The record gives the reactivity of an RNA of 177 nucleotides to DMS and 2A3. For 2A3, 14,055 sequencing reads were counted. Reactivities are given for positions 27 through 126. For 2A3 the reverse transcriptase was SuperScript II with manganese.
RNA sequence: GGGAACGACUCGAGUAGAGUCGAAAAUGGUCAAUGUCGCCACGCAUGACGGCGCAACUGGCCUGCGAUGCCCUGCAGAUGGCGCUGUGGCGGCGUAAGAGGCCCCGGAACGUUAUCGUUCACACGGAGUGUAAGUACGGUUCGCCGUACUUACACUAAAAGAAACAACAACAACAAC
Reactivity to DMS in 0.01 (KOAc 150mM, MgCl2 10mM, bicine 150mM(pH8.5), 24C), signal-to-noise 9, nucleotides 027 to 126: u010g020g010u000c020a090a080u000g010u000c010g010c000c000a050c060g020c240a130u020g020a100c250g000g010c000g020c030a090a090c100u010g010g010c070c020u000g000c080g010a110u010g010c060c040c040u000g020c050a040g010a120u010g010g010c020g010c010u010g020u000g000g020c040g020g010c010g010u000a050a100g000a180g000g010c010c010c030c050g010g010a030a030c020g010u000u020a140u010c030g020u000u010c020a100c120a300c160g000g000
Reactivity to 2A3 in 0.01 (KOAc 150mM, MgCl2 10mM, bicine 150mM(pH8.5), 24C), signal-to-noise 5, nucleotides 027 to 126: u120g010g000u030c050a050a030u080g040u040c010g000c000c000a010c020g090c090a220u240g090a100c100g030g000c010g000c010a050a070c080u090g130g020c000c000u010g020c030g060a080u140g050c010c000c030u030g010c010a020g010a180u150g120g000c000g000c050u050g010u030g020g010c020g000g000c000g000u010a070a040g040a070g070g010c010c000c000c010g050g010a010a020c020g040u170u210a160u300c020g010u010u020c030a050c010a000c110g110g030